Chemical mapping of a 177-nucleotide RNA with DMS.
[RMDB]
RNA sequence: GGGAACGACUCGAGUAGAGUCGAAAAUGCCGCUUACCGGAUACCUGUCCGCCUUUCUCCCUUCGGGAAGCGUGGCUGCUCACGCUGUACCUAUCUCAGUUCGGUGUAGGUCGUUCGCUCCAAGCUGUGUCUGGACGAGUUUCGACUCGUCCAGACAAAAAGAAACAACAACAACAAC
Reactivity to DMS in 0.01 (KOAc 150mM, MgCl2 10mM, bicine 150mM(pH8.5), 24C), signal-to-noise 1, nucleotides 027 to 126: u010g000c040c010g010c100u020u000a130c090c050g030g000a100u000a050c090c040u010g000u000c050c040g010c010c050u000u010u000c050u000c000c010c010u000u000c190g000g000g020a120a030g000c050g020u000g040g000c230u000g010c100u000c010a030c040g010c020u000g080u000a150c040c030u000a110u020c080u000c040a100g000u010u010c060g050g030u000g000u010a080g030g000u000c060g040u000u000c000g000c080u000c030c000a090a050g030c060u010g020
The RNA was probed in 150 mM KOAc, 10 mM MgCl2 and 150 mM bicine (pH 8.5) at 24 C. For DMS, 1,077 sequencing reads were counted. Values are in units of 0.01, from 0 to 300, in steps of 10.